Notes
The record gives the reactivity of an RNA of 177 nucleotides to 2A3. For 2A3, 291 sequencing reads were counted. Source: RMDB library OK1LIB, as collected in RNAgym. For 2A3 the reverse transcriptase was SuperScript II with manganese. The RNA was probed in 150 mM KOAc, 10 mM MgCl2 and 150 mM bicine (pH 8.5) at 24 C.
RNA sequence: GGGAACGACUCGAGUAGAGUCGAAAAUACAUGCAAUUGGACUAUCAUUUAGAUUUACUUCAGCAACAACUAAUUUUGUAGGUUUUGGUGAAGAAAUUUCAUCAGAUGAUUCAUCAGAAGAGGAGCCGUUACGUUCCCGCUUCGGCGGGAACGUAACAAAAGAAACAACAACAACAAC
Reactivity to 2A3 in 0.01 (KOAc 150mM, MgCl2 10mM, bicine 150mM(pH8.5), 24C), signal-to-noise 1, nucleotides 027 to 126: u170a000c000a000u060g040c000a000a040u300u000g080g000a000c020u000a000u000c000a000u000u000u050a050g000a020u090u000u000a210c000u000u000c020a110g050c000a000a020c000a070a000c150u000a000a140u030u300u300u040g210u240a190g050g180u080u000u080u120g160g060u070g000a000a000g000a000a020a000u000u030u030c110a120u030c050a090g070a070u000g000a000u220u000c000a070u060c140a070g170a220a070g000a100g070g120a000g070c080c080